RNA sequence: GGGAACGACUCGAGUAGAGUCGAAAAAAGUCUUGCCUUUCUAGUUUCCCCGGAAAGAAAUCAGUUUUUGUUCAGGAACAAAGAAAAGAAAAAUGUAGGUUAGAGCUACCCAAGUAAAUGACAGAGGAAAUAACAUAAAUGUGAUAGGACUUAGGGACAAUUCUUGUCCGUUCGCGGACAAGAAUUGAAAAGAAACAACAACAACAAC
Reactivity to 2A3 in 0.01 (KOAc 150mM, MgCl2 10mM, bicine 150mM(pH8.5), 24C), signal-to-noise 1, nucleotides 027 to 156: a000a000g070u010c090u030u000g050c010c010u120u000u000c010u010a110g000u150u000u000c030c010c010c020g030g040a060a050a000g030a030a070a050u170c010a050g030u050u030u000u130u200g100u000u060c090a030g090g000a050a050c030a130a030a000g120a030a010a050a050g070a000a180a010a000a000u040g000u010a000g070g150u010u100a030g000a000g020c010u010a010c000c030c030a010a050g070u120a190a000a000u080g050a100c030a040g020a040g040g160a000a110a140u110a060a000c070a040u160a000a210a050u120g010u000g060a060u060a150g090g000a030c020u050u040a000g000g000g030a010